[RMDB]
RNA sequence: GGGAACGACUCGAGUAGAGUCGAAAACAAACGAUAACAGCUAUGAUGAAAGCACACGGUGAUUAUGGGAAAAAAAACAUAACGUUCUGGGCCAGGCCAGCUCUGCAGACAGACAAGCUCAUGUGAAGGUCAAACGUAACACACAUUGGAGGGAGGAGAUUUUUAACUAAUUCGUUAGUUAAAAAUCAAAAGAAACAACAACAACAAC
Reactivity to DMS in 0.01 (KOAc 150mM, MgCl2 10mM, bicine 150mM(pH8.5), 24C), signal-to-noise 2, nucleotides 027 to 156: c070a070a070a120c070g010a080u000a070a150c060a110g010c010u010a080u010g020a100u000g000a090a130a080g030c050a050c060a070c070g020g030u000g000a070u010u010a050u000g030g000g030a000a000a010a010a030a130a110a100c030a070u010a050a030c070g040u000u010c040u010g020g020g030c020c020a080g010g000c030c030a030g010c040u000c010u000g010c020a080g010a110c060a120g080a090c050a030a100g020c070u030c040a050u010g000u000g000a070a100g020g000u020c030a040a050a060c050g020u010a020a060c050a000c090a040c040a090u000u010g010g030a050g020g010g000a060g020g030a140
Reactivity to 2A3 in 0.01 (KOAc 150mM, MgCl2 10mM, bicine 150mM(pH8.5), 24C), signal-to-noise 4, nucleotides 027 to 156: c020a000a080a020c070g060a070u080a130a050c020a040g040c050u090a040u190g060a040u060g040a140a060a000g010c010a020c010a020c070g020g030u060g030a100u070u160a120u180g020g000g030a070a030a000a010a000a000a000a040c070a070u160a070a020c050g010u050u040c030u060g010g040g030c040c000a010g020g040c010c020a020g010c010u010c010u060g040c020a020g050a100c010a020g030a030c010a050a020g000c010u050c050a020u080g020u010g080a060a010g000g030u060c000a070a030a030c060g030u060a030a000c030a000c010a010c000a100u040u090g020g010a010g010g020g010a010g030g020a040
An RNA of 207 nucleotides, treated with DMS and 2A3 and read out base by base. DMS adducts were read by reverse transcription with MarathonRT. Reactivities are given for positions 27 through 156. 2A3 adducts were read by reverse transcription with SuperScript II with manganese. DMS (dimethyl sulfate) methylates the pairing face of unpaired adenines and cytosines.